[RMDB]
RNA sequence: GGGAACGACUCGAGUAGAGUCGAAAAUCAGAAUCAGGCCGGAGUGUUUAGCGCUCCGUAAACACGGUCGUACAUCCAGCCGGUAGCCUGGUUCCUUGCAUUGAGUGAUGUACGGGGUUUAUAGAGCAAAAGAAAGACCUGUUCGCAGGUCUUUCAAGGAUUCAUGAUUGUUCGCAAUCAUGAAUCCAAAAGAAACAACAACAACAAC
Reactivity to 2A3 in 0.01 (KOAc 150mM, MgCl2 10mM, bicine 150mM(pH8.5), 24C), signal-to-noise 1, nucleotides 027 to 156: u120c010a000g000a000a010u010c010a010g000g000c010c000g000g010a000g010u030g040u110u180u300a150g100c050g000c000u000c010c010g010u030a010a010a010c080a040c080g030g020u050c030g030u060a000c000a020u010c040c040a010g020c000c000g030g020u010a020g000c000c000u000g000g010u000u000c010c010u010u120g020c020a080u050u160g030a040g080u170g000a010u000g000u010a020c010g000g000g000g000u080u230u000a160u100a070g110a020g040c040a030a050a080a010g020a000a000a010g000a000c000c000u000g010u030u020c210g000c040a000g000g020u000c000u000u000u020c010a000a000

This 207-nucleotide RNA was probed chemically with 2A3. The 2A3 profile rests on 957 reads. Reactivities are given for positions 27 through 156. The RNA was probed in 150 mM KOAc, 10 mM MgCl2 and 150 mM bicine (pH 8.5) at 24 C. 2A3 adducts were read by reverse transcription with SuperScript II with manganese.